An RNA of 177 nucleotides, treated with DMS and 2A3 and read out base by base. The reactions ran in a buffer of 150 mM KOAc, 10 mM MgCl2 and 150 mM bicine (pH 8.5), at 24 C. It was measured as part of the RMDB library TTRINS. Values cover nucleotides 27 to 126. The DMS profile rests on 2,253 reads.
RNA sequence: GGGAACGACUCGAGUAGAGUCGAAAAGAUAUGGAGCCUUCUCUAGCGUGGGCGACGAAGCUGGACUUAUCAUGGUCGGAAACGACCAUCUUAUGGUCCAGCAGAGCCUCGGGAGGCUCCUAAGUCACUCUUACUAGUCGUUCGCGACUAGUAAGAGAAAAGAAACAACAACAACAAC
Reactivity to DMS in 0.01 (KOAc 150mM, MgCl2 10mM, bicine 150mM(pH8.5), 24C), signal-to-noise 2, nucleotides 027 to 126: g010a080u010a300u010g000g000a010g030c000c010u000u010c020u000c160u010a160g080c240g000u020g020g010g020c020g030a060c300g000a140a160g000c010u000g000g010a020c000u000u000a010u000c180a020u000g010g010u000c000g020g000a070a110a190c000g000a020c000c000a010u000c020u010u010a030u020g000g000u000c000c000a010g020c000a010g010a220g000c020c000u000c100g000g030g000a030g010g030c000u010c020c000u000a000a040g030u000c030a230
Reactivity to 2A3 in 0.01 (KOAc 150mM, MgCl2 10mM, bicine 150mM(pH8.5), 24C), signal-to-noise 2, nucleotides 027 to 126: g020a020u100a060u140g000g000a000g000c000c020u210u130c140u040c090u230a110g150c070g280u300g050g030g000c050g110a260c020g000a070a020g000c010u000g000g020a000c000u080u060a040u100c040a020u020g000g040u000c000g040g000a010a030a020c010g000a000c000c010a000u000c000u020u190a160u260g040g000u020c000c000a000g020c000a010g000a000g000c000c000u030c080g000g060g000a020g000g000c010u000c020c000u010a010a000g000u000c010a020